[RMDB]
RNA sequence: GGGAACGACUCGAGUAGAGUCGAAAAGAUAUGGACCUGAACUACAGUACCAAGUACCUAUGCCGAAGAACUUAAUCGGAAACGAUUAAGGGAGGCAUAGGUACUUUGUACUGCAGGUCCUAAGUCACACAUACAGCUGGUUCGCCAGCUGUAUGUGAAAAGAAACAACAACAACAAC
Reactivity to DMS in 0.01 (KOAc 150mM, MgCl2 10mM, bicine 150mM(pH8.5), 24C), signal-to-noise 1, nucleotides 027 to 126: g020a070u000a300u020g020g000a000c040c010u000g000a050a100c050u000a300c000a000g000u000a000c000c130a000a040g000u000a000c000c000u000a000u000g010c010c000g050a100a170g020a090a130c010u000u000a000a000u000c000g020g000a240a150a180c000g010a000u000u000a010a020g000g000g000a040g020g000c000a000u000a020g000g000u000a000c000u000u000u000g020u000a000c000u000g000c030a000g010g000u000c020c000u020a020a100g000u000c050a300
An RNA of 177 nucleotides, treated with DMS and read out base by base. It was measured as part of the RMDB library TTRINS. The reactions ran in a buffer of 150 mM KOAc, 10 mM MgCl2 and 150 mM bicine (pH 8.5), at 24 C. Reactivities are given for positions 27 through 126.